This 177-nucleotide RNA was probed chemically with DMS and 2A3. It was measured as part of the RMDB library OK2TST. The DMS profile rests on 1,302 reads. For DMS the reverse transcriptase was MarathonRT. The RNA was probed in 150 mM KOAc, 10 mM MgCl2 and 150 mM bicine (pH 8.5) at 24 C.

RNA sequence: GGGAACGACUCGAGUAGAGUCGAAAAAUGAGCGGCUUGCGGAAGUCGCGCUUCAUCUGGCGACGCAGAAUGUGGAAGUAGUUGGCAGGCGUCGUGACGUUUGCCACCUGCAUAUUGUCUUCCGCAACCUCAUCCUGCCUUUCGAGGCAGGAUGAGGAAAAGAAACAACAACAACAAC
Reactivity to DMS in 0.01 (KOAc 150mM, MgCl2 10mM, bicine 150mM(pH8.5), 24C), signal-to-noise 1, nucleotides 027 to 126: a070u000g000a080g020c080g030g000c080u000u050g020c030g000g000a000a030g000u000c030g040c040g050c030u010u010c130a080u000c130u010g050g000c020g000a060c130g000c040a110g020a070a080u000g010u000g010g030a160a130g030u010a040g000u010u000g000g000c000a040g000g000c000g030u000c070g010u000g000a070c000g010u000u010u000g030c000c000a010c020c000u010g020c020a100u000a090u030u010g000u000c020u000u000c000c000g020c030a050a070
Reactivity to 2A3 in 0.01 (KOAc 150mM, MgCl2 10mM, bicine 150mM(pH8.5), 24C), signal-to-noise 1, nucleotides 027 to 126: a000u140g000a020g030c030g000g000c000u030u040g020c020g040g000a010a000g020u030c030g000c030g060c100u110u090c020a160u000c040u050g090g000c070g050a060c040g000c070a000g040a190a020u060g060u060g080g040a080a080g040u080a010g010u100u060g000g000c000a020g000g000c000g000u010c040g060u050g050a000c000g020u000u010u010g020c000c030a000c000c000u020g000c020a030u060a100u150u180g000u030c000u030u000c010c000g000c000a000a040